[RMDB]
RNA sequence: GGGAACGACUCGAGUAGAGUCGAAAAACUAUUCUUGAAUUUGCAGUAGCUCUGAUCCAAGCUUAUGUGUUUACACUGCUAGUAAGCUUAUACCUACACGACAAUACAUAAUGACCCACCAAACACAUGCAUACCACAUAGUAAACCCAAGCCCAUGCUAUCGAGAUGCGUUCGCGCAUCUCGAUAGAAAAGAAACAACAACAACAAC
Reactivity to 2A3 in 0.01 (KOAc 150mM, MgCl2 10mM, bicine 150mM(pH8.5), 24C), signal-to-noise 1, nucleotides 027 to 156: a000c040u040a070u100u020c040u140u060g110a150a080u070u030u090g000c010a010g020u040a000g010c030u000c040u140g080a080u120c110c010a080a010g000c000u010u030a010u060g110u000g010u010u010u070a060c110a000c010u080g000c060u080a040g030u060a150a000g000c030u070u050a010u000a160c020c020u030a040c020a000c080g090a010c060a140a000u080a130c040a040u110a090a140u130g040a050c000c000c060a020c080c020a000a210a000c060a000c000a060u070g010c000a010u000a090c030c030a010c060a040u020a030g070u060a090a070a000c030c000c000a070a010g010c020c030c010a000u060g000